[RMDB]
RNA sequence: GGGAACGACUCGAGUAGAGUCGAAAAUAAAUACUCCCUCCGUCCGGAAGUACUUGUCGUCAAAAUGGAAAGAAAUGGAUGUAUCUAGAACUAAAAUACGUCUAGAUACAUCCAUUUCUAUGACAAACGGUCAUACGUAAUUCGUUACGUAUGACCGAAAAGAAACAACAACAACAAC
Reactivity to DMS in 0.01 (KOAc 150mM, MgCl2 10mM, bicine 150mM(pH8.5), 24C), signal-to-noise 3, nucleotides 027 to 126: u020a060a060a030u040a070c090u000c010c000c010u020c030c040g000u000c020c060g030g000a060a080g020u020a070c140u000u000g000u020c030g010u010c070a060a080a130a150u020g030g000a070a110a020g000a010a010a000u000g000g000a010u000g000u000a010u000c000u000a020g000a010a080c070u020a050a070a060a080u040a150c260g010u000c000u000a010g010a010u000a000c000a000u000c010c000a010u000u000u000c010u000a020u000g020a080c040a050a030a150
Reactivity to 2A3 in 0.01 (KOAc 150mM, MgCl2 10mM, bicine 150mM(pH8.5), 24C), signal-to-noise 2, nucleotides 027 to 126: u110a000a070a040u060a060c040u020c020c010c020u050c020c040g000u000c010c020g010g010a140a010g070u030a010c050u010u020g110u080c090g020u000c030a000a100a120a150u090g070g040a040a040a000g010a000a000a010u000g000g000a000u000g020u020a000u010c000u000a000g090a120a060c020u110a260a120a000a000u120a170c020g000u020c000u000a000g000a000u010a000c000a000u020c070c000a000u000u000u000c000u010a000u000g000a000c000a030a120a020

This 177-nucleotide RNA was probed chemically with DMS and 2A3. The reactions ran in a buffer of 150 mM KOAc, 10 mM MgCl2 and 150 mM bicine (pH 8.5), at 24 C. Reactivities are given for positions 27 through 126. Source: RMDB libraries RFM100 and RFMREP, as collected in RNAgym.